[RMDB]
Source: RMDB library M2RFPK, as collected in RNAgym.
Structure probing data (DMS and 2A3) for a 207-nucleotide construct.
The 2A3 profile rests on 2,206 reads.
The RNA was probed in 150 mM KOAc, 10 mM MgCl2 and 150 mM bicine (pH 8.5) at 24 C.
For DMS, 2,953 sequencing reads were counted.
2A3 adducts were read by reverse transcription with SuperScript II with manganese.
RNA sequence: GGGAACGACUCGAGUAGAGUCGAAAAGAAACGCAAGGCCGCUGACCGACGGGAUAUUGUGGGGCUUACCACAGGUGACGCGGCGUUAUCACUUGCCUUUUAAGCCGACCGUCUGGGCUGCAUACAAACCACCCAACUAUCUUCGGAUAGUUGGGAACCAUUAGUCGUACUUCGGUACGACUAAUGGAAAAGAAACAACAACAACAAC
Reactivity to DMS in 0.01 (KOAc 150mM, MgCl2 10mM, bicine 150mM(pH8.5), 24C), signal-to-noise 2, nucleotides 027 to 156: g020a050a080a060c070g010c050a080a070g000g000c000c010g030c080u010g010a080c030c010g000a050c070g040g030g010a120u000a050u000u000g030u000g040g020g060g060c140u000u000a050c040c110a080c000a110g000g020u000g000a110c040g020c020g000g010c070g010u010u010a070u010c090a110c000u000u000g020c030c050u000u010u000u020a020a110g000c010c010g000a070c030c040g000u000c030u000g000g040g050c020u000g030c050a060u000a120c090a040a100a090c020c020a220c000c000c000a020a010c000u000a000u000c000u000u010c300g030g000a010u000a000g000u000u000g020g000g010a000a000
Reactivity to 2A3 in 0.01 (KOAc 150mM, MgCl2 10mM, bicine 150mM(pH8.5), 24C), signal-to-noise 1, nucleotides 027 to 156: g010a000a050a000c100g010c030a000a030g120g010c030c010g030c050u060g040a020c000c030g000a020c030g000g050g070a130u110a170u230u120g020u040g010g020g040g070c070u050u130a050c000c000a020c000a010g000g020u040g010a030c060g000c010g000g000c010g000u020u020a020u030c020a020c080u010u030g020c010c030u020u150u020u100a000a010g020c000c010g030a040c030c020g010u010c030u050g000g050g000c010u040g010c040a040u080a070c080a020a030a040c040c020a050c010c000c000a000a000c000u000a010u010c000u010u020c110g070g000a000u000a000g000u000u000g000g000g000a000a000